[RMDB]
RNA sequence: GGGAACGACUCGAGUAGAGUCGAAAAAACAGCUGCACGUACGUACCAGCAGUUUUCGAAAUAAACGUACGUACGAAAUAAAUAAAUUCUACUCGAUGCGAAACAAAGCAAAGUCGUUCCCAGGGAAUCGACGAAAAUACUUCGGUAUUUUCGUCGAAAAAGAAACAACAACAACAAC
Reactivity to 2A3 in 0.01 (KOAc 150mM, MgCl2 10mM, bicine 150mM(pH8.5), 24C), signal-to-noise 1, nucleotides 027 to 126: a000a000c110a040g020c020u050g020c050a040c160g040u020a000c020g000u020a020c010c000a020g110c010a000g000u020u000u070u110c050g110a040a120a090u180a030a150a010c020g020u000a010c030g000u020a020c000g000a040a080a000u200a010a030a000u090a000a100a000u040u010c030u020a000c000u000c000g040a030u080g030c030g030a050a180a210c110a070a060a000g000c000a020a140a000g020u000c000g000u010u020c000c020c020a000g030g040g020a020a050
Record summary: Structure probing data (2A3) for a 177-nucleotide construct. The data come from the RNA Mapping Database (RMDB), library M2PK90. 2A3 is a SHAPE reagent: it acylates the 2'-hydroxyl of flexible nucleotides of all four kinds.